[RMDB]
RNA sequence: GGGAACGACUCGAGUAGAGUCGAAAAAUCGCAACAUCAGGGUUGCGGCACGCCGGAAAAACGACACGGAACGUCAGGAAGGGGUCAAUGGCCGUUACGCUAAUUCAGUAAGCCUGGAAUUUUGUCUCAUUAUCGCCUAAUUCGUUAGGCGAUAAUGAAAAGAAACAACAACAACAAC
Reactivity to DMS in 0.01 (KOAc 150mM, MgCl2 10mM, bicine 150mM(pH8.5), 24C), signal-to-noise 4, nucleotides 027 to 126: a080u010c030g010c010a020a010c030a120u040c210a120g010g000g010u010u000g000c030g010g030c140a040c090g000c010c010g030g020a030a060a030a040a060c090g000a060c100a030c080g000g020a070a070c080g000u000c050a080g000g010a140a070g000g000g000g040u010c050a020a050u020g000g010c010c040g030u030u030a030c090g020c060u000a030a050u000u000c060a100g000u010a100a100g020c060c000u000g000g010a060a070u000u010u010u000g010u020c120u000
Reactivity to 2A3 in 0.01 (KOAc 150mM, MgCl2 10mM, bicine 150mM(pH8.5), 24C), signal-to-noise 7, nucleotides 027 to 126: a000u060c010g010c010a010a010c010a090u180c080a070g090g100g000u010u010g000c000g000g010c030a030c040g050c010c020g040g030a060a060a020a010a010c060g050a010c020a000c070g040g010a070a020c030g030u030c030a020g040g090a060a050g040g020g010g000u050c020a040a070u080g060g000c020c000g040u040u050a020c020g010c030u050a070a070u100u020c020a010g040u070a070a020g040c010c020u030g040g060a060a060u080u090u070u100g100u020c010u000